[RMDB]
Chemical mapping of a 177-nucleotide RNA with DMS and 2A3.
It was measured as part of the RMDB library M2PK90.
RNA sequence: GGGAACGACUCGAGUAGAGUCGAAAAAGAAAGAGCGUAGCACACACUCAGACUAAGUCUGACACACACCUACGCUAAACAUCUAAGUGUGUGAUCGAGAUAUCGAUGUGUGUGUAAGAUGAAAAAAGUUAAGGCAUUCGUUCGCGAAUGCCUUAACAAAAGAAACAACAACAACAAC
Reactivity to DMS in 0.01 (KOAc 150mM, MgCl2 10mM, bicine 150mM(pH8.5), 24C), signal-to-noise 1, nucleotides 027 to 126: a100g010a110a080a200g000a150g010c010g000u000a300g000c000a000c000a010c020a030c000u000c000a000g000a010c020u010a100a160g000u000c010u010g160a030c000a000c000a010c010a000c000c000u000a170c010g000c000u000a030a110a120c100a010u010c070u010a130a110g000u000g050u000g000u000g000a010u020c000g000a030g000a110u000a100u000c050g050a000u000g000u000g000u000g010u000g040u010a000a080g000a050u000g010a040a050a040a140a140a110
Reactivity to 2A3 in 0.01 (KOAc 150mM, MgCl2 10mM, bicine 150mM(pH8.5), 24C), signal-to-noise 1, nucleotides 027 to 126: a000g140a020a070a010g130a010g000c010g010u020a000g010c010a000c000a000c030a000c020u000c010a000g010a010c050u160a200a020g030u040c000u010g030a000c000a000c010a000c000a010c020c000u020a000c000g000c000u010a030a040a040c000a010u000c030u040a010a020g010u010g000u000g000u000g020a020u020c030g030a010g060a150u230a070u220c000g000a010u000g000u000g000u010g000u010g000u020a020a000g020a000u050g070a150a020a030a020a000a000
Values cover nucleotides 27 to 126.